The record gives the reactivity of an RNA of 177 nucleotides to 2A3.
High 2A3 reactivity points to a flexible backbone, as in loops and unpaired stretches.
For 2A3, 377 sequencing reads were counted.
Reactivities are rounded to 0.1 and cut off at 0 and 3.
RNA sequence: GGGAACGACUCGAGUAGAGUCGAAAACAUCGUGUUGCGCAGCAUUUGCAGCAGGUGUUACGCCACCAGAUAUAAGUAAUGUACCUAAAGUUACAGAUGCAAUACCUACACCUAGUUUACGAAUUGAUAGCCAGGAUACGUUCGCGUAUCCUGGCUAAAAAGAAACAACAACAACAAC
Reactivity to 2A3 in 0.01 (KOAc 150mM, MgCl2 10mM, bicine 150mM(pH8.5), 24C), signal-to-noise 1, nucleotides 027 to 126: c000a090u030c160g300u000g040u000u000g120c270g000c060a300g080c000a110u130u130u030g000c030a000g000c000a000g000g000u000g000u010u040a000c000g030c040c020a030c000c000a000g090a120u110a020u040a080a020g000u040a170a000u080g000u030a120c000c000u000a130a240a000g060u130u040a000c000a000g020a040u170g000c070a020a020u000a060c030c040u040a020c020a070c040c000u000a000g000u030u030u060a160c060g060a100a150u000u000g030a030
The reactions ran in a buffer of 150 mM KOAc, 10 mM MgCl2 and 150 mM bicine (pH 8.5), at 24 C.